[RMDB]
RNA sequence: GGGAACGACUCGAGUAGAGUCGAAAAGAUAUGGAGCAAUCGGGAGAGCAAUGGUGUCGGAAACGACACCGCGCUCGAGGAUCGAGUUGCUCCUAAGUCAAAAGCUGAUGUCUUCGGACAUCAGCAACCUGUAUUUAGCGUUCGCGCUAAAUACAGGAAAAGAAACAACAACAACAAC
Reactivity to 2A3 in 0.01 (KOAc 150mM, MgCl2 10mM, bicine 150mM(pH8.5), 24C), signal-to-noise 3, nucleotides 027 to 126: g010a010u060a020u090g000g000a000g000c000a000a030u010c000g020g000g000a030g020a000g010c050a040a140u300g010g000u000g010u010c000g020g060a060a050a030c000g000a000c000a000c010c010g020c060g010c000u010c010g010a090g010g020a000u010c010g010a090g280u060u010g010c010u000c000c000u010a070a010g050u020c030a020a030a080a160g000c010u000g000a000u000g010u000c010u030u130c300g150g000a000c000a010u000c000a000g000c000a000a000
Reactivity to DMS in 0.01 (KOAc 150mM, MgCl2 10mM, bicine 150mM(pH8.5), 24C), signal-to-noise 4, nucleotides 027 to 126: g010a040u000a300u000g000g000a000g020c010a020a040u010c000g000g000g000a060g010a020g000c010a130a210u010g010g020u000g010u010c000g020g000a070a080a200c000g020a020c000a010c000c010g020c300g000c000u010c010g000a130g000g000a050u000c000g000a030g010u000u010g010c010u000c000c000u000a000a040g010u010c040a070a090a100a120g010c000u000g010a010u000g000u000c000u000u010c210g010g000a020c000a000u010c000a000g000c000a020a000

The record gives the reactivity of an RNA of 177 nucleotides to 2A3 and DMS. The RNA was probed in 150 mM KOAc, 10 mM MgCl2 and 150 mM bicine (pH 8.5) at 24 C.